[RMDB]
RNA sequence: GGGAACGACUCGAGUAGAGUCGAAAACAACCAACUGCACAUUUAUGUGCACGUUUCAGAAGUCCUGCAGCCAGUCCUAGUGAGAGUGGUCAGUUGUUUAUGGAAGCAGGCACAGAUGCAGGGGGGACUCGUCCAGGAUGGAGCAGUUUAAGCUGGACGUUACUUACCAGUUCGCUGGUAAGUAACGAAAAGAAACAACAACAACAAC
Reactivity to DMS in 0.01 (KOAc 150mM, MgCl2 10mM, bicine 150mM(pH8.5), 24C), signal-to-noise 2, nucleotides 027 to 156: c020a000a300c080c050a090a280c030u000g000c000a010c010a090u010u010u000a050u020g080u000g030c040a050c120g010u000u000u000c050a080g000a160a170g000u000c030c010u000g010c010a190g030c000c020a070g000u020c030c010u000a120g030u020g020a120g000a080g010u020g050g010u010c070a150g030u000u000g020u000u000u000a170u010g010g000a060a130g000c020a040g040g000c050a060c040a030g000a070u000g010c040a130g050g000g050g000g030g010a130c030u020c070g000u010c040c020a120g010g000a110u010g010g000a150g060c070a050g000u010u010u000a040a120g050c010u000g000g000a300
Reactivity to 2A3 in 0.01 (KOAc 150mM, MgCl2 10mM, bicine 150mM(pH8.5), 24C), signal-to-noise 3, nucleotides 027 to 156: c050a000a060c020c020a020a050c010u020g090c000a000c010a040u110u170u200a290u290g010u000g030c010a030c070g010u030u050u080c050a050g020a060a000g070u030c010c020u030g000c040a040g030c030c010a020g080u050c010c010u140a060g040u100g150a100g020a000g080u040g000g040u060c060a050g010u040u040g060u010u170u100a050u040g040g000a030a000g030c010a020g010g050c010a010c000a080g080a010u140g040c040a050g000g010g010g000g020g010a040c010u010c070g030u010c020c020a020g000g060a020u070g000g020a020g000c030a010g000u040u050u060a040a000g030c000u010g020g000a000
Structure probing data (DMS and 2A3) for a 207-nucleotide construct. The DMS profile rests on 2,938 reads. 2A3 adducts were read by reverse transcription with SuperScript II with manganese.